[RMDB]
RNA sequence: GGGAACGACUCGAGUAGAGUCGAAAAGAUAUGGACGUUCUACGACGAAGAACAACAAUUAUAGGGUUUGUAUAUCGGAAACGAUAUAUGAUCCUAUAAUUGUUGGGAGUCGUAGACGUCCUAAGUCGAUAUUGAUGACCUUCGGGUCAUCAAUAUCAAAAGAAACAACAACAACAAC
Reactivity to DMS in 0.01 (KOAc 150mM, MgCl2 10mM, bicine 150mM(pH8.5), 24C), signal-to-noise 2, nucleotides 027 to 126: g010a130u010a300u030g000g000a020c010g000u000u000c000u000a000c000g020a020c010g000a180a150g000a150a240c010a000a030c000a000a000u000u000a000u000a010g000g000g020u000u000u010g020u000a010u000a010u000c000g000g000a080a130a290c010g020a010u000a000u000a000u000g000a000u000c010c000u000a010u000a000a000u000u000g010u010u000g020g000g000a100g000u000c000g000u000a000g010a010c000g000u000c000c000u000a010a070g000u000c120
Reactivity to 2A3 in 0.01 (KOAc 150mM, MgCl2 10mM, bicine 150mM(pH8.5), 24C), signal-to-noise 3, nucleotides 027 to 126: g060a060u170a120u200g010g020a020c020g100u300u060c030u000a010c000g020a010c000g300a300a100g030a100a010c000a000a010c000a000a030u000u020a010u020a010g030g010g120u030u240u300g050u060a000u020a010u010c010g000g060a130a040a050c020g000a000u010a000u000a000u000g000a000u020c000c010u000a000u000a000a000u000u010g010u000u000g000g020g010a010g000u000c010g010u000a000g000a000c000g000u000c010c010u000a010a000g060u020c090